The record gives the reactivity of an RNA of 177 nucleotides to DMS and 2A3. As a SHAPE reagent, 2A3 marks flexible, mostly unpaired nucleotides at the ribose 2'-OH. The data come from the RNA Mapping Database (RMDB), library OK1LIB. The DMS profile rests on 2,657 reads. Reactivities are given for positions 27 through 126.
[RMDB]
RNA sequence: GGGAACGACUCGAGUAGAGUCGAAAAGGGAAUCGCUUUAUUCGAGGCGAACGAUUCCCGCACUCUCUUCGCCUCGAAUAAAGGAGAGUGCACGACGGUGGACAUGCGAAAGCAUGUCCAUCGUCGAGCAGGUAGAAGGCUUCGGCCUUCUACCUGCAAAAGAAACAACAACAACAAC
Reactivity to DMS in 0.01 (KOAc 150mM, MgCl2 10mM, bicine 150mM(pH8.5), 24C), signal-to-noise 2, nucleotides 027 to 126: g010g000g010a060a020u000c020g000c300u000u040u000a000u000u000c010g000a080g000g000c000g010a080a060c130g030a030u010u030c010c040c030g010c040a050c150u020c010u000c000u000u000c000g010c010c000u000c000g010a030a030u000a020a060a010g000g010a090g000a060g000u000g000c070a080c000g000a000c010g040g000u000g000g000a000c000a020u000g000c020g000a140a150a190g030c010a000u000g020u000c000c000a000u000c000g000u000c000g000a020
Reactivity to 2A3 in 0.01 (KOAc 150mM, MgCl2 10mM, bicine 150mM(pH8.5), 24C), signal-to-noise 2, nucleotides 027 to 126: g070g000g040a030a100u030c040g020c130u010u060u060a020u030u020c010g000a000g010g000c000g010a030a020c050g010a050u050u050c010c020c010g010c010a050c010u070c000u000c010u000u040c010g000c000c000u030c020g000a000a010u070a030a000a000g050g000a050g010a040g070u100g020c060a030c070g010a000c000g000g010u000g010g000a000c000a000u010g000c000g040a160a000a020g000c000a000u000g010u000c000c000a000u000c000g000u000c010g000a000